The record gives the reactivity of an RNA of 170 nucleotides to 2A3. The data come from the RNA Mapping Database (RMDB), library 15KLIB. Values cover nucleotides 27 to 129. The RNA was probed in 150 mM KOAc, 10 mM MgCl2 and 150 mM bicine (pH 8.5) at 24 C. The 2A3 profile rests on 2,034 reads. Reactivities are rounded to 0.1 and cut off at 0 and 3.

[RMDB]
RNA sequence: GGGAACGACUCGAGUAGAGUCGAAAAUUGAAGGUAAAACAGCCUGUGGGUGAAACACACCCACAGGGCCCAUAGGGCGCUAGCACUCUGGUAUCACGGUACCUCUGUGCGCCUGUUUUACCGAAGGGUGCCCCCGCGUUCGCGCGGGGGAAAAGAAACAACAACAACAAC
Reactivity to 2A3 in 0.01 (KOAc 150mM, MgCl2 10mM, bicine 150mM(pH8.5), 24C), signal-to-noise 1, nucleotides 027 to 129: u060u020g050a050a000g000g000u030a000a000a000a000c000a000g010c020c020u000g020u010g020g000g040u000g140a010a010a020c190a000c030a000c070c000c000a000c000a020g070g000g010c000c000c020a020u210a030g000g000g000c000g010c030u060a000g020c020a000c000u070c000u000g000g000u030a000u020c050a040c280g150g010u000a000c000c000u020c010u010g000u010g010c000g050c000c000u000g000u000u000u000u000a000c010c000g000a000a000g000g030g000u110g030